[RMDB]
Description:
Structure probing data (DMS and 2A3) for a 177-nucleotide construct.
RNA sequence: GGGAACGACUCGAGUAGAGUCGAAAAGAAAGAAAGAAAUGAUGCCUAUGAUGACUUGCAAGAUUAUUGCCUACAUUGUUUGACAAGUAUCUUUGUGAUAUUAAUUGCAAGUACCUGAGGCUUGAAAGUCUUUGAUGUGGUUCGCCACAUCAAAGACAAAAGAAACAACAACAACAAC
Reactivity to DMS in 0.01 (KOAc 150mM, MgCl2 10mM, bicine 150mM(pH8.5), 24C), signal-to-noise 2, nucleotides 027 to 126: g000a220a120a100g000a050a040a040g000a080a120a060u020g010a040u000g000c000c010u000a060u050g000a070u020g020a300c000u010u000g000c010a000a020g000a170u010u000a090u020u000g000c020c130u000a030c040a140u070u000g020u000u000u090g000a100c050a020a060g000u000a010u000c060u030u060u000g040u020g000a000u000a010u000u000a100a090u000u000g000c010a000a000g000u000a040c050c010u000g000a100g000g000c000u030u000g020a100a100a070
Reactivity to 2A3 in 0.01 (KOAc 150mM, MgCl2 10mM, bicine 150mM(pH8.5), 24C), signal-to-noise 3, nucleotides 027 to 126: g060a010a080a010g120a020a030a020g060a030a110a070u180g140a070u150g000c000c000u040a080u060g090a080u120g020a030c000u000u000g000c000a000a000g000a080u110u030a040u020u150g050c000c020u050a060c040a220u050u060g050u090u080u160g090a050c010a030a000g030u070a120u140c050u100u090u060g100u070g020a030u010a010u090u130a120a070u000u010g000c000a000a000g000u000a020c000c020u030g040a010g010g000c000u010u040g020a000a010a020
It was measured as part of the RMDB libraries RFM100 and RFMREP. The RNA was probed in 150 mM KOAc, 10 mM MgCl2 and 150 mM bicine (pH 8.5) at 24 C. 2A3 adducts were read by reverse transcription with SuperScript II with manganese.